[RMDB]
RNA sequence: GGGAACGACUCGAGUAGAGUCGAAAAAAUGAGAUUUCAAUAUCAACAGAGACAGAAUUUCUCGUGCGUGGUGCUGUAGGUUCUGGCAAAUCAACAGGCCUUCCACACCAUUUAGCCAAGAAAGGAAUAAUUGGUGUCUCUUCGGAGACACCAAUUAAAAAGAAACAACAACAACAAC
Reactivity to DMS in 0.01 (KOAc 150mM, MgCl2 10mM, bicine 150mM(pH8.5), 24C), signal-to-noise 2, nucleotides 027 to 126: a030a030u000g010a100g010a090u000u010u000c030a060a110u010a110u000c030a130a140c190a050g000a040g000a090c210a150g000a060a030u020u040u000c000u000c050g000u020g000c070g000u000g000g000u040g020c110u020g000u010a080g000g000u000u020c020u000g050g000c190a070a090a050u060c220a050a190c010a030g010g000c000c000u020u000c240c040a130c000a020c020c000a050u010u040u030a170g050c010c020a010a050g010a000a010a040g000g000a090a100
Reactivity to 2A3 in 0.01 (KOAc 150mM, MgCl2 10mM, bicine 150mM(pH8.5), 24C), signal-to-noise 3, nucleotides 027 to 126: a000a020u080g020a040g060a000u000u080u060c090a100a150u050a050u140c100a050a200c060a070g070a040g060a140c010a060g150a060a040u060u110u030c040u000c010g040u090g070c040g010u000g000g000u000g000c080u000g040u000a000g000g070u220u300c000u000g030g090c110a040a140a210u160c030a040a130c010a030g010g000c000c060u000u000c030c000a000c000a000c000c000a000u070u120u070a000g000c000c000a070a030g200a120a060a000g220g070a110a020
Chemical mapping of a 177-nucleotide RNA with DMS and 2A3. DMS adducts were read by reverse transcription with MarathonRT. The reactions ran in a buffer of 150 mM KOAc, 10 mM MgCl2 and 150 mM bicine (pH 8.5), at 24 C. Values are in units of 0.01, from 0 to 300, in steps of 10.